[RMDB]
RNA sequence: GGGAACGACUCGAGUAGAGUCGAAAACAGAGGAUAAUGAAAGUGGAAUUCACUCAGUGUUCAAUGAAUGUGGUCUCCAAAACGCUUUUUAAAAAGAGUCCAAUUCAUCAUCACAUUGAUAGGAACAAUCUACUAAAUGCUUCGGCAUUUAGUAGAUAAAAGAAACAACAACAACAAC
Reactivity to 2A3 in 0.01 (KOAc 150mM, MgCl2 10mM, bicine 150mM(pH8.5), 24C), signal-to-noise 9, nucleotides 027 to 126: c020a010g090a050g080g070a070u110a120a120u210g120a120a090a040g060u070g050g100a110a160u110u060c020a030c050u020c000a010g010u000g010u070u060c060a030a020u020g030a010a010u180g050u040g240g000u000c000u000c010c000a050a050a100a120c100g120c080u180u120u070u160u230a070a120a020a010a000g000a000g000u000c000c000a000a010u020u000c010a010u010c010a000u090c000a010c010a030u020u050g040a050u090a120g060g010a030a020c010a030
Reactivity to DMS in 0.01 (KOAc 150mM, MgCl2 10mM, bicine 150mM(pH8.5), 24C), signal-to-noise 8, nucleotides 027 to 126: c070a090g010a090g000g010a070u020a040a070u010g010a050a090a090g010u000g010g010a110a140u010u010c040a070c090u000c010a030g020u010g000u000u010c300a160a020u010g000a010a000u010g010u010g010g000u000c010u000c010c100a080a070a090a090c270g020c190u010u020u020u030u020a040a050a080a090a120g000a030g010u000c010c010a030a040u020u000c010a010u000c090a130u040c180a030c020a030u000u000g000a030u010a100g000g010a040a040c180a070